[RMDB]
RNA sequence: GGGAACGACUCGAGUAGAGUCGAAAAACAGCUAAGGCUAAUUUGAAUAUUAAUUUAAUGAAGAGUACGCCUGGCGCGUCACAAAGGAAAUAUCUGCUUUUCGCCUGAUGUGUUACAAAAAAUAAAGCGUUAUAUCUUAGUUCGCUAAGAUAUAACGAAAAGAAACAACAACAACAAC
Reactivity to DMS in 0.01 (KOAc 150mM, MgCl2 10mM, bicine 150mM(pH8.5), 24C), signal-to-noise 4, nucleotides 027 to 126: a060c070a140g010c040u000a090a030g010g010c000u000a110a130u000u000u010g000a120a070u010a050u010u010a080a060u010u000u010a090a080u000g000a120a110g000a100g000u010a080c130g020c010c020u000g000g010c070g010c100g010u000c050a040c080a040a120a070g010g000a020a100a060u000a050u000c090u000g010c130u000u000u000u000c090g030c030c040u010g000a100u000g010u000g000u000u030a060c090a010a020a080a080a070a070u010a060a060a140g020
Reactivity to 2A3 in 0.01 (KOAc 150mM, MgCl2 10mM, bicine 150mM(pH8.5), 24C), signal-to-noise 5, nucleotides 027 to 126: a000c020a020g000c010u120a090a030g020g000c010u020a020a060u100u070u060g010a040a040u040a090u230u190a170a110u240u050u110a130a120u090g020a030a050g030a020g090u040a020c030g000c000c000u020g040g000c070g000c030g040u010c010a030c030a070a080a010g060g020a060a100a000u110a040u020c050u080g090c030u050u010u040u060c030g000c020c010u040g030a070u100g020u010g020u050u050a050c060a020a140a010a020a000a030u160a050a100a000g070
This 177-nucleotide RNA was probed chemically with DMS and 2A3. DMS (dimethyl sulfate) methylates the pairing face of unpaired adenines and cytosines. Values cover nucleotides 27 to 126. Conditions: 150 mM KOAc, 10 mM MgCl2 and 150 mM bicine (pH 8.5), 24 C. It was measured as part of the RMDB library RFMREP. The DMS profile rests on 4,025 reads.